[RMDB]
RNA sequence: GGGAACGACUCGAGUAGAGUCGAAAAGAGCCAGCACUCAGCCAAGGUGUGCCAUGUCCUUGAUUUAAAUACAGGUACAUCCUGUAAACCAGUUAAGCCAUUAAAGACGGAAGAGCAGCUGAGAUACGAAAGGUUUGAACGGGGUAAACCUACUCAGCUAAAGGGAUCGAUUCGUCGAUCCCUUUAGAAAAGAAACAACAACAACAAC
Reactivity to DMS in 0.01 (KOAc 150mM, MgCl2 10mM, bicine 150mM(pH8.5), 24C), signal-to-noise 3, nucleotides 027 to 156: g030a180g020c030c070a120g030c040a110c000u000c020a080g030c040c050a040a110g020g050u000g000u000g010c030c060a070u000g010u000c040c040u000u000g010a110u000u000u000a090a090a210u000a020c000a050g050g020u000a130c130a170u000c000c050u000g020u000a010a070a130c080c030a200g020u000u000a030a130g030c010c040a100u000u000a050a070a090g040a070c040g000g000a040a070g000a080g020c040a080g010c000u000g010a050g000a120u000a090c040g020a080a070a160g020g020u000u000u000g030a050a110c290g000g020g000g020u010a010a030a030c020c000u000a100c100u000c020a070g000
Reactivity to 2A3 in 0.01 (KOAc 150mM, MgCl2 10mM, bicine 150mM(pH8.5), 24C), signal-to-noise 1, nucleotides 027 to 156: g030a000g050c010c020a010g040c000a040c020u030c010a050g060c010c020a060a030g000g010u030g000u050g000c020c010a140u060g020u020c010c000u030u040g080a100u130u090u170a080a080a000u100a020c000a030g000g000u070a050c000a120u100c030c000u000g030u040a070a030a090c050c020a000g020u060u100a040a000g010c010c010a000u060u160a150a060a020g020a000c080g010g010a080a000g020a030g000c020a000g000c010u010g050a010g020a050u070a010c010g080a130a120a010g000g000u020u010u020g010a020a010c030g010g020g010g010u040a020a080a000c000c010u010a040c040u030c010a010g040

Chemical mapping of a 207-nucleotide RNA with DMS and 2A3.
It was measured as part of the RMDB library OK3TST.
For 2A3, 841 sequencing reads were counted.
Values cover nucleotides 27 to 156.